Chemical mapping of a 177-nucleotide RNA with 2A3 and DMS. The 2A3 profile rests on 555 reads. The reactions ran in a buffer of 150 mM KOAc, 10 mM MgCl2 and 150 mM bicine (pH 8.5), at 24 C. Source: RMDB library OK1LIB, as collected in RNAgym.
[RMDB]
RNA sequence: GGGAACGACUCGAGUAGAGUCGAAAAAGACAAAAGAGUAACCACAGCUGGGGGAUCGCGUUGGAUCUUAUGCCCAAGAAUUGGCAACGCCACACCAUGUACUGGAAUUGGGAAGCUGCGCAUAACGAAAUGGUACGGGGUUCGCCCCGUACCAUUUAAAAGAAACAACAACAACAAC
Reactivity to 2A3 in 0.01 (KOAc 150mM, MgCl2 10mM, bicine 150mM(pH8.5), 24C), signal-to-noise 1, nucleotides 027 to 126: a000g130a040c180a120a050a140a020g070a020g060u140a040a030c000c000a000c070a020g020c080u090g000g000g000g000g000a100u060c040g000c020g110u020u100g070g000a030u060c070u000u010a000u090g100c000c000c040a030a030g120a050a160u200u090g000g020c040a070a000c030g000c020c000a090c000a000c070c060a020u080g030u150a060c100u020g010g000a070a000u040u080g000g260g000a010a010g000c000u010g040c020g000c000a020u000a040a020c010g030
Reactivity to DMS in 0.01 (KOAc 150mM, MgCl2 10mM, bicine 150mM(pH8.5), 24C), signal-to-noise 3, nucleotides 027 to 126: a100g000a130c150a020a080a040a090g060a060g010u010a110a080c080c050a060c120a100g040c040u030g040g000g000g020g010a070u000c110g010c050g010u000u010g030g000a170u000c010u000u010a060u000g010c070c010c040a010a090g010a070a030u040u000g000g000c060a050a160c180g000c010c060a010c100a120c050c020a030u010g010u000a070c050u010g010g010a090a150u000u020g030g110g000a130a070g010c040u000g010c080g000c050a050u050a050a150c240g000